RNA sequence: GGGAACGACUCGAGUAGAGUCGAAAAGAUAUGGAGACAACCUUCGAUAAGUAGGGUUCGGAAACGAACCUCUACUUUUGACGAAGGGCUCCUAAGUCAAAGCAAGAUCCCUUCGGGGAUCUUGCAACUAUGAACAGAAGUUCGCUUCUGUUCAUAGAAAAGAAACAACAACAACAAC
Reactivity to DMS in 0.01 (KOAc 150mM, MgCl2 10mM, bicine 150mM(pH8.5), 24C), signal-to-noise 8, nucleotides 027 to 126: g010a040u000a300u000g000g000a020g010a090c080a110a140c010c000u000u000c000g010a120u000a010a010g010u000a000g010g000g010u000u000c000g000g000a070a070a190c000g010a010a010c000c000u020c010u010a000c000u000u000u010u010g010a210c140g000a010a010g000g000g000c010u000c000c000u000a040a110g000u000c030a100a110a150g010c000a010a000g000a000u000c000c000c000u000u010c210g030g010g000g000a000u000c000u000u000g010c000a010a050
Reactivity to 2A3 in 0.01 (KOAc 150mM, MgCl2 10mM, bicine 150mM(pH8.5), 24C), signal-to-noise 4, nucleotides 027 to 126: g030a010u090a030u170g030g010a020g020a060c090a100a260c150c000u010u010c020g060a090u030a150a030g010u000a000g000g010g010u010u000c010g010g010a050a060a010c000g000a000a010c020c010u060c010u010a000c000u020u030u020u060g070a020c000g010a000a000g000g010g000c010u000c000c000u000a130a010g050u030c060a120a050a040g000c000a000a000g000a010u000c020c000c000u000u070c260g060g000g010g000a000u000c000u010u000g000c010a000a000